The record gives the reactivity of an RNA of 177 nucleotides to 2A3 and DMS. For DMS, 7,289 sequencing reads were counted.

RNA sequence: GGGAACGACUCGAGUAGAGUCGAAAAUUGAACGGAUUCGUCCGUUCAACGCGUGCGAUCCAAACGUAGUACAAAAGUACAGACGAAAGCUCAAGGAUCAAAUGAUACAGCCGUUCGCGGCUGUAAAGCUGUAGUCAUAUUUCGAUAUGACUACAGCAAAAGAAACAACAACAACAAC
Reactivity to 2A3 in 0.01 (KOAc 150mM, MgCl2 10mM, bicine 150mM(pH8.5), 24C), signal-to-noise 5, nucleotides 027 to 126: u020u010g000a010a000c000g010g010a010u040u060c170g070u000c030c000g000u000u000c000a000a010c030g050c030g050u130g040c060g000a000u000c010c000a030a010a030c040g020u040a020g000u010a030c040a020a300a050a070g000u020a010c020a050g160a060c030g100a170a060a050g050c030u050c170a050a070g010g000a010u000c000a010a050a060u120g020a020u010a030c010a010g000c040c010g010u060u070c240g000c000g100g000c000u000g010u000a020a020a000
Reactivity to DMS in 0.01 (KOAc 150mM, MgCl2 10mM, bicine 150mM(pH8.5), 24C), signal-to-noise 6, nucleotides 027 to 126: u000u000g000a000a010c000g000g010a030u000u010c200g030u000c000c000g010u000u010c000a000a020c140g010c100g010u000g010c180g010a020u010c000c000a080a140a120c020g010u000a080g010u000a010c030a090a070a070a180g020u000a010c010a070g020a080c040g010a110a060a130g010c090u000c100a070a100g000g000a020u000c010a090a100a070u010g000a260u010a020c000a000g010c000c000g010u000u010c200g020c010g010g000c000u000g010u000a010a070a130
Source: RMDB library M2PK50, as collected in RNAgym.